[RMDB]
RNA sequence: GGGAACGACUCGAGUAGAGUCGAAAAUGUUGGCUUAUGGGAACGCAUGACCGGCAGCAUGAAAGGGGCUUCUUAUGUUGGUAUCGCCGCCAUUAUGGUGUGCGUGUUCGUCGGCCCUUAUAUUGAAAGACGAUGUUCUUUUCGAAGAACAUCGUCUAAAAGAAACAACAACAACAAC
Reactivity to DMS in 0.01 (KOAc 150mM, MgCl2 10mM, bicine 150mM(pH8.5), 24C), signal-to-noise 2, nucleotides 027 to 126: u010g010u010u000g020g010c060u000u000a090u000g010g010g040a100a090c120g010c020a030u000g080a100c030c030g000g010c020a050g000c090a050u010g000a070a100a110g010g000g000g000c040u010u010c100u000u000a060u010g010u020u010g010g040u020a060u020c020g010c000c020g020c010c000a110u010u000a090u000g050g030u000g010u000g020c010g010u010g000u000u000c020g000u010c070g000g000c020c000c020u000u000a020u010a140u000u000g000a100a110
Structure probing data (DMS) for a 177-nucleotide construct. The RNA was probed in 150 mM KOAc, 10 mM MgCl2 and 150 mM bicine (pH 8.5) at 24 C. DMS adducts were read by reverse transcription with MarathonRT.